[RMDB]
RNA sequence: GGGAACGACUCGAGUAGAGUCGAAAAUCGUUUUUUUUUUCUCUGACAGAUGGUCAGAACUUCAUCUAGGUUCGAAUCCUACUGAGAGGUCCACUAGAGAUCAGAAAUUGUUGAAGAAAGAACAAGACAACUCAUUAUCAUUCGUGAUAAUGAGUUGAAAAGAAACAACAACAACAAC
Reactivity to 2A3 in 0.01 (KOAc 150mM, MgCl2 10mM, bicine 150mM(pH8.5), 24C), signal-to-noise 3, nucleotides 027 to 126: u040c050g000u030u050u010u020u030u000u010u020u060u020c040u010c010u040g030a030c020a060g190a130u050g100g000u030c010a030g050a080a020c000u050u020c000a240u020c030u010a010g040g010u000u070c060g050a060a070u050c020c000u020a060c060u050g010a030g000a020g070g020u000c030c000a030c030u050a070g010a020g010a180u040c020a010g170a140a240a120u150u100g040u070u040g010a040a020g020a050a050a010g010a030a010c020a050a030g060a040
Reactivity to DMS in 0.01 (KOAc 150mM, MgCl2 10mM, bicine 150mM(pH8.5), 24C), signal-to-noise 4, nucleotides 027 to 126: u000c130g000u000u000u000u000u000u000u000u000u000u000c020u000c020u000g010a030c030a070g010a160u010g010g000u000c020a140g010a030a030c030u000u000c040a130u000c050u000a030g010g010u000u000c260g000a220a110u010c010c010u000a040c150u000g010a090g010a050g010g000u000c020c050a120c140u000a120g010a110g000a030u000c010a030g010a060a080a140u000u000g000u000u000g000a020a040g000a030a030a030g010a020a030c170a050a100g000a180